[RMDB]
RNA sequence: GGGAACGACUCGAGUAGAGUCGAAAAUCAUCAUCGGAACGGGAAGCACAUGCGCAUUGGUGCCGCCCACAUAGCGAUAAAGCGGCAGGCCGCUGGCUUGCGCAGCCGCCUUGGCAACCGCCAGGGAGGCUGACGGAGCAUUCGUGCUCCGUCAGCCAAAAGAAACAACAACAACAAC
Reactivity to DMS in 0.01 (KOAc 150mM, MgCl2 10mM, bicine 150mM(pH8.5), 24C), signal-to-noise 2, nucleotides 027 to 126: u010c060a060u000c100a030u010c020g030g010a110a130c190g000g020g000a090a090g000c010a040c040a110u010g000c100g030c100a120u010u000g000g000u000g010c010c300g000c000c000c030a050c120a150u010a140g020c060g000a080u020a020a150a130g030c040g000g020c060a010g000g000c040c010g010c100u000g040g030c220u000u010g010c010g020c020a050g020c010c020g020c000c000u000u000g000g010c010a140a030c250c300g010c000c000a010g010g010g000a070
Reactivity to 2A3 in 0.01 (KOAc 150mM, MgCl2 10mM, bicine 150mM(pH8.5), 24C), signal-to-noise 1, nucleotides 027 to 126: u070c000a010u000c000a030u030c020g040g000a040a100c010g000g000g090a070a000g000c000a020c000a070u220g050c040g000c090a080u030u160g020g010u030g030c020c010g000c000c060c010a020c010a050u070a030g090c020g040a030u090a100a170a010g000c040g040g000c010a010g070g050c010c030g150c210u060g000g000c020u080u040g030c090g000c020a000g010c020c050g020c000c000u000u000g000g030c010a130a210c160c130g020c010c000a000g010g000g000a040